[RMDB]
RNA sequence: GGGAACGACUCGAGUAGAGUCGAAAACUCGAACGGUUCGCCGUUCGAGAAAAGCGCGUCAGCGGUACGAUGCAAGCGCAAGCGCGUGCAUCGUAAAUGAAAAAACUUGUGUGUUCGCACACAAGAACUACAUAGUGUUGUUCGCAACACUAUGUAGAAAAGAAACAACAACAACAAC
Reactivity to 2A3 in 0.01 (KOAc 150mM, MgCl2 10mM, bicine 150mM(pH8.5), 24C), signal-to-noise 7, nucleotides 027 to 126: c000u000c000g000a000a000c000g020g040u060u070c200g050c080c000g000u000u000c000g000a000g000a000a020a000a000g040c010g010c010g080u110c070a040g030c010g030g070u020a000c000g000a010u000g000c000a030a040g000c010g000c150a180a050g150c040g000c010g030u010g000c000a000u010c000g000u020a050a040a060u110g040a070a050a000a020a020a050c010u010u010g000u000g010u000g010u040u060c240g030c080a000c000a000c000a000a000g000a010a020
Reactivity to DMS in 0.01 (KOAc 150mM, MgCl2 10mM, bicine 150mM(pH8.5), 24C), signal-to-noise 5, nucleotides 027 to 126: c000u000c020g000a000a010c000g010g010u000u010c200g040c000c000g010u000u000c000g010a010g000a030a040a070a140g010c020g020c020g000u010c110a080g010c010g010g010u000a010c000g010a010u000g000c000a030a040g020c000g030c120a120a160g020c020g020c010g010u000g000c000a000u000c000g010u000a010a060a050u010g000a000a070a090a090a060a080c000u000u000g010u000g020u000g010u000u020c220g010c010a010c000a010c000a000a000g000a060a140